[RMDB]
RNA sequence: GGGAACGACUCGAGUAGAGUCGAAAAGUACCGCGUGUGUGGUGAGUCGACGAAACGGCAUGCUACCGCCGCGGUGUGAAGCGUAGGUGACGAUACGUUGAGGCUGCGGAGGUCAGCACCUGCAUAGGCCGCUUGCUUGGUUCGCCAGGUAAGCGGCAAAAGAAACAACAACAACAAC
Reactivity to DMS in 0.01 (KOAc 150mM, MgCl2 10mM, bicine 150mM(pH8.5), 24C), signal-to-noise 7, nucleotides 027 to 126: g020u010a080c010c000g000c050g010u020g030u020g010u010g000g010u000g000a090g020u000c010g020a100c160g000a080a080a120c060g010g000c030a130u000g000c000u000a020c030c000g010c010c020g000c010g020g020u010g000u040g000a190a050g010c000g010u000a020g000g010u020g010a090c150g000a060u000a010c010g000u000u010g000a250g000g000c010u000g000c010g000g010a040g000g000u000c120a030g000c010a060c170c040u000g000c040a070u020a080g000
Reactivity to 2A3 in 0.01 (KOAc 150mM, MgCl2 10mM, bicine 150mM(pH8.5), 24C), signal-to-noise 4, nucleotides 027 to 126: g030u030a030c000c000g000c010g000u070g000u000g000u020g030g020u030g030a050g020u000c000g010a090c020g020a080a020a030c010g010g000c010a020u080g000c000u010a000c000c010g000c000c000g000c000g000g000u020g060u050g060a020a000g000c010g010u000a020g010g090u070g110a030c040g030a040u000a040c010g000u010u040g030a010g130g000c020u000g000c000g010g020a020g010g020u030c040a000g000c000a010c000c000u000g000c010a030u030a080g110